[RMDB]
RNA sequence: GGGAACGACUCGAGUAGAGUCGAAAAAGAAUGCAAUGUACAAUAGUCCCAAAGACAUGGACCACAUCGCAGCAUUUCCAUGGCUCGCAGGCUGGAGGUUUGGCAGGCAGAUCAACGCCCUGUCAUAUACUACAAGUAUCUUGAUAACUGCAUAUGAAUUAGAAACCUCAUUCGUGAGGUUUCUAAUAAAAGAAACAACAACAACAAC
Reactivity to 2A3 in 0.01 (KOAc 150mM, MgCl2 10mM, bicine 150mM(pH8.5), 24C), signal-to-noise 3, nucleotides 027 to 156: a000g060a020a040u070g000c070a050a080u080g040u080a090c030a070a060u050a110g030u020c040c010c040a060a060a000g050a010c050a030u070g000g000a010c030c030a050c080a190u100c100g050c110a050g030c030a080u030u000u100c050c010a000u040g020g020c040u070c030g030c020a010g050g000c000u020g050g030a050g000g000u060u040u060g020g000c010a000g000g020c050a020g020a220u190c070a110a020c050g050c030c000c000u000g010u000c000a000u020a000u000a030c010u030a030c010a110a020g040u030a030u100c040u060u070g050a060u050a200a080c050u070g000c020a000u070a070u260g030a070
Reactivity to DMS in 0.01 (KOAc 150mM, MgCl2 10mM, bicine 150mM(pH8.5), 24C), signal-to-noise 3, nucleotides 027 to 156: a110g020a090a080u000g010c030a070a090u000g010u010a130c110a120a100u010a150g000u010c000c030c030a100a120a090g010a050c040a040u000g030g010a060c160c050a070c090a100u000c030g000c040a110g020c050a120u000u000u010c000c020a050u000g000g000c010u000c050g060c030a020g020g060c020u010g000g000a040g010g000u000u000u010g010g000c000a060g010g000c030a120g010a160u000c110a050a090c090g030c120c000c010u010g040u010c020a070u000a070u000a060c030u000a030c040a050a150g000u000a050u000c050u000u000g010a130u000a050a080c010u000g000c000a080u000a100u000g000a100